Chemical mapping of a 177-nucleotide RNA with DMS and 2A3.
Values cover nucleotides 27 to 126.
For DMS the reverse transcriptase was MarathonRT.
The reactions ran in a buffer of 150 mM KOAc, 10 mM MgCl2 and 150 mM bicine (pH 8.5), at 24 C.
RNA sequence: GGGAACGACUCGAGUAGAGUCGAAAAGGACAACGCUUCGGCGUUGUCCAAACGCUCAACCUCAGAGCGCAUGAGUCGAACGAAUACAGUUCGACAUGAGGAAAAUCUCCCUCUUCGGAGGGAGAAACUAUAAGUUGUUGUUCGCAACAACUUAUAGAAAAGAAACAACAACAACAAC
Reactivity to DMS in 0.01 (KOAc 150mM, MgCl2 10mM, bicine 150mM(pH8.5), 24C), signal-to-noise 5, nucleotides 027 to 126: g010g020a010c010a000a000c000g020c000u000u020c190g040g020c000g030u000u010g010u000c000c000a010a030a160c030g000c000u000c000a050a070c010c010u000c000a010g010a010g000c010g010c080a080u000g010a020g030u000c000g010a010a000c000g000a180a130u010a150c180a100g020u000u000c000g000a000c000a000u000g010a020g000g010a080a080a090a120u000c000u000c000c000c000u000c000u000u010c180g010g010a010g000g000g000a000g000a000a010a090
Reactivity to 2A3 in 0.01 (KOAc 150mM, MgCl2 10mM, bicine 150mM(pH8.5), 24C), signal-to-noise 5, nucleotides 027 to 126: g000g000a000c010a000a000c010g010c020u070u110c260g110g000c000g000u000u000g000u010c000c000a000a000a000c000g000c000u000c010a100a070c000c000u010c000a000g000a000g000c010g020c130a220u260g040a010g020u000c000g000a000a000c000g030a090a040u290a230c090a100g000u000u000c000g000a000c000a000u010g000a000g000g020a060a000a000a010u020c000u000c000c000c000u010c020u030u030c180g090g000a000g010g000g000a000g000a000a000a000